[RMDB]
RNA sequence: GGGAACGACUCGAGUAGAGUCGAAAAUAAAACCGCGAAGAGAACCAAGCCUUGAGACACAAGGAGGGAUGUCUCAAGCCUUGGUUCUCGACUAGUGUCGAGUCGUUCCCAAUCCCUCCGCAAAAAAUCAAUAUCACAACUUCGGUUGUGAUAUUGAAAAAGAAACAACAACAACAAC
Reactivity to DMS in 0.01 (KOAc 150mM, MgCl2 10mM, bicine 150mM(pH8.5), 24C), signal-to-noise 1, nucleotides 027 to 126: u010a070a040a080a070c170c150g020c100g000a110a100g010a120g000a010a020c010c000a010a010g000c300c000u000u000g020a010g010a010c010a100c200a040a050g000g000a000g000g010g010a050u010g000u000c010u000c010a000a010g010c180c000u010u000g000g000u000u000c010u000c000g020a000c010u010a060g000u000g030u000c000g000a000g030u000c000g010u000u000c000c000c010a050a000u020c020c000c020u020c010c000g020c210a000a000a100a050a030a040
Reactivity to 2A3 in 0.01 (KOAc 150mM, MgCl2 10mM, bicine 150mM(pH8.5), 24C), signal-to-noise 1, nucleotides 027 to 126: u080a000a100a010a030c070c070g040c110g150a220a100g080a020g010a110a010c000c000a000a000g010c010c000u020u010g000a010g000a000c010a010c000a080a040g000g000a000g000g000g000a000u000g000u000c000u000c000a000a000g010c000c000u000u000g010g010u000u000c000u000c000g000a000c010u030a020g080u040g080u060c010g020a010g000u010c000g000u000u000c000c010c000a000a000u000c010c000c000u000c010c010g010c000a080a090a020a010a000a010
This 177-nucleotide RNA was probed chemically with DMS and 2A3. For 2A3 the reverse transcriptase was SuperScript II with manganese. Reactivities are given for positions 27 through 126. Source: RMDB library M2PK90, as collected in RNAgym.